The record gives the reactivity of an RNA of 177 nucleotides to 2A3 and DMS.
[RMDB]
RNA sequence: GGGAACGACUCGAGUAGAGUCGAAAAGAUAUGGAACUGUUGCUUUUGACGAUCGAGGUAUCGGAAACGAUACGUAGAUCGAUAAGCACCAGUUCCUAAGUCAAACUCCAUAGUUCGCUAUGGAGAACGUAACGUUACACUUCGGUGUAACGUUACGAAAAGAAACAACAACAACAAC
Reactivity to 2A3 in 0.01 (KOAc 150mM, MgCl2 10mM, bicine 150mM(pH8.5), 24C), signal-to-noise 1, nucleotides 027 to 126: g040a060u070a050u110g010g010a010a010c000u010g010u030u000g020c030u070u080u170u300g300a150c080g010a020u010c010g030a110g160g040u010a010u000c000g000g020a080a090a010c010g010a000u020a000c010g020u000a000g000a000u000c000g000a000u010a000a000g000c000a000c000c000a000g000u000u000c000c000u010a000a000g040u000c030a060a060a210c000u000c000c000a010u000a020g040u060u050c300g010c130u000a000u000g000g000a020g000a030a010
Reactivity to DMS in 0.01 (KOAc 150mM, MgCl2 10mM, bicine 150mM(pH8.5), 24C), signal-to-noise 2, nucleotides 027 to 126: g010a060u000a280u010g000g000a020a000c000u000g000u000u000g000c000u000u000u010u000g010a170c120g000a000u000c000g050a210g000g020u000a010u000c000g010g000a090a050a180c010g010a010u000a010c000g000u000a300g000a010u000c000g020a070u000a030a000g000c000a000c060c000a010g000u010u000c000c000u000a000a050g030u010c020a140a090a190c000u000c000c000a000u000a000g010u000u010c140g000c020u010a010u020g000g000a000g010a010a070
The RNA was probed in 150 mM KOAc, 10 mM MgCl2 and 150 mM bicine (pH 8.5) at 24 C.